[RMDB]
RNA sequence: GGGAACGACUCGAGUAGAGUCGAAAAGCAACGCAAAGCCGCGGCAAGUGGAGUUAGCGAGAAGAGACUAGGCUUCGGUUUCUUCAAGUGAAGCGGUCACCAAUCAGGUGUGGUAGUUACCGUAAAAAUAACCGCUCUUUGUUCGCAAAGAGCGGAACAUUUUCAUGUGGUUCGCCACAUGAAAAUGAAAAGAAACAACAACAACAAC
Reactivity to DMS in 0.01 (KOAc 150mM, MgCl2 10mM, bicine 150mM(pH8.5), 24C), signal-to-noise 1, nucleotides 027 to 156: g000c020a060a050c060g050c020a010a090a160g000c050c010g030c050g010g020c070a060a100g000u000g030g010a140g050u000u000a270g030c060g000a300g000a070a030g030a060g030a060c010u000a080g030g000c020u000u010c040g040g020u000u000u000c000u000u010c030a020a280g000u000g000a070a160g030c040g010g000u000c020a050c030c020a050a170u000c100a120g000g020u000g040u010g030g000u000a050g000u000u000a010c030c030g000u000a020a060a080a100a070u000a080a220c000c000g000c000u000c000u010u000u000g010u010u020c270g060c020a020a020a040g020a070g010c000g010g020a000a030
Reactivity to 2A3 in 0.01 (KOAc 150mM, MgCl2 10mM, bicine 150mM(pH8.5), 24C), signal-to-noise 2, nucleotides 027 to 156: g040c020a020a070c060g000c030a060a110a010g000c010c010g020c020g030g020c080a060a090g030u090g040g050a110g050u130u150a020g040c020g030a030g010a050a010g020a000g000a010c030u060a060g110g080c030u100u080c070g020g000u010u010u000c010u010u030c030a030a020g030u050g070a080a010g000c000g020g020u030c020a010c030c000a020a110u190c060a050g000g080u040g030u040g120g020u040a080g030u090u090a060c020c020g030u060a060a070a030a000a000u140a100a060c010c000g020c000u000c000u000u010u000g000u030u080c150g000c080a010a000a020g010a010g020c020g000g000a000a010